[RMDB]
This 177-nucleotide RNA was probed chemically with 2A3 and DMS. Conditions: 150 mM KOAc, 10 mM MgCl2 and 150 mM bicine (pH 8.5), 24 C.
RNA sequence: GGGAACGACUCGAGUAGAGUCGAAAAGCCUUACGAUUCGUCGUAAGGCAUACAAAGUUUUGGCACUAUGAGCCCGCAGCGUUGGUGCUCCCACGCGGAGCAAUACGACGGAUUUCGAUCCGUCGAAAGAAUUGGAAUAUUUCGAUAUUCCAAUUCUAAAAGAAACAACAACAACAAC
Reactivity to 2A3 in 0.01 (KOAc 150mM, MgCl2 10mM, bicine 150mM(pH8.5), 24C), signal-to-noise 5, nucleotides 027 to 126: g000c000c000u000u000a010c010g000a020u020u060c180g050u000c000g000u150a000a000g000g000c000a000u050a000c040a010a130a040g000u030u030u130u180g050g020c030a010c050u070a080u190g050a020g030c000c010c020g010c050a080g020c040g080u110u150g070g040u090g030c010u010c010c010c000a200c120g030c220g010g020a010g000c030a020a040u090a070c020g000a000c000g000g010a010u070u040u060c090g050a020u000c000c000g000u000c010g000a020a030
Reactivity to DMS in 0.01 (KOAc 150mM, MgCl2 10mM, bicine 150mM(pH8.5), 24C), signal-to-noise 8, nucleotides 027 to 126: g010c000c000u000u000a000c000g010a020u000u010c200g020u000c000g020u000a000a010g000g010c000a010u000a030c120a090a100a100g010u000u000u010u000g010g010c040a070c070u010a080u000g010a130g000c010c000c050g020c110a080g010c090g010u010u000g020g010u010g010c020u000c010c000c020a090c240g020c110g010g000a030g010c020a050a040u010a120c010g010a020c000g000g000a010u000u000u010c180g000a030u000c000c000g010u000c000g000a020a070